[RMDB]
RNA sequence: GGGAACGACUCGAGUAGAGUCGAAAAGGUGGCGCCGUCGAGGAACGCCGGAUGACGCAGCACGUUGACCAAGAGCUCACGGUUGGUGCGCAGACCGUGCAGCCGGGCGCGUACCAGCGCAUCGGCCUAUCCGCGUACUUUUCGAAGUACGCGGAUAAAAAGAAACAACAACAACAAC
Reactivity to DMS in 0.01 (KOAc 150mM, MgCl2 10mM, bicine 150mM(pH8.5), 24C), signal-to-noise 3, nucleotides 027 to 126: g010g010u000g010g000c020g020c020c030g010u010c060g000a150g010g020a050a080c140g000c000c000g020g020a060u010g000a110c030g020c000a170g020c060a050c020g030u000u030g020a080c040c020a110a130g020a150g020c050u000c000a020c030g010g000u000u000g010g010u010g010c020g020c050a180g000a010c010c010g000u000g030c180a050g000c020c050g000g000g000c000g010c010g000u000a050c060c070a090g010c010g010c030a040u000c020g020g010c050c160
Reactivity to 2A3 in 0.01 (KOAc 150mM, MgCl2 10mM, bicine 150mM(pH8.5), 24C), signal-to-noise 1, nucleotides 027 to 126: g120g000u060g010g000c020g010c010c000g050u070c040g040a090g000g060a210a050c040g010c050c000g000g010a030u050g030a060c060g000c000a030g020c060a010c050g040u130u280g100a180c030c010a100a070g030a010g080c000u010c010a000c000g000g020u000u040g010g030u130g020c040g020c020a000g020a040c000c010g000u030g010c000a000g000c000c010g000g030g000c000g000c000g010u010a050c010c020a050g010c020g020c000a050u050c010g000g010c010c000
This 177-nucleotide RNA was probed chemically with DMS and 2A3. For DMS, 2,896 sequencing reads were counted. The data come from the RNA Mapping Database (RMDB), library OK2TST. As a SHAPE reagent, 2A3 marks flexible, mostly unpaired nucleotides at the ribose 2'-OH.